[RMDB]
RNA sequence: GGGAACGACUCGAGUAGAGUCGAAAAUAAGUCUUCUUCGGAAGACUUAAAAUAAGCUGACCAAGCUAUGAGGUCUAUAUCGUCAUGCACAAUAGAAUAAAAAGCCGAAAAGGUUCGCCUUUUCGAAGGUGAUGUUAAUGUUCGCAUUAACAUCACCAAAAGAAACAACAACAACAAC
Reactivity to DMS in 0.01 (KOAc 150mM, MgCl2 10mM, bicine 150mM(pH8.5), 24C), signal-to-noise 1, nucleotides 027 to 126: u000a000a010g020u010c000u010u000c000u000u010c130g030g020a030a020g000a010c000u000u000a000a030a120a120u020a090a100g000c050u000g020a180c030c030a060a080g020c020u000a120u020g010a190g000g000u020c060u000a070u000a020u010c080g000u000c110a050u000g020c080a050c040a040a030u000a060g020a020a090u000a040a110a030a160a100g000c210c020g000a010a000a000a020g010g020u000u000c180g010c010c020u010u000u000u020c020g000a090a040
Reactivity to 2A3 in 0.01 (KOAc 150mM, MgCl2 10mM, bicine 150mM(pH8.5), 24C), signal-to-noise 1, nucleotides 027 to 126: u070a000a000g000u000c000u000u010c000u000u070c230g040g000a000a000g000a000c000u000u000a000a000a000a010u170a030a040g030c050u020g030a040c000c020a020a030g110c030u100a060u210g040a010g030g010u000c110u080a150u000a030u180c080g070u000c070a060u110g050c050a020c000a110a040u070a110g130a010a060u150a150a270a020a030a000g170c060c020g010a000a000a000a000g010g050u040u060c100g100c000c000u000u050u000u000c050g010a100a070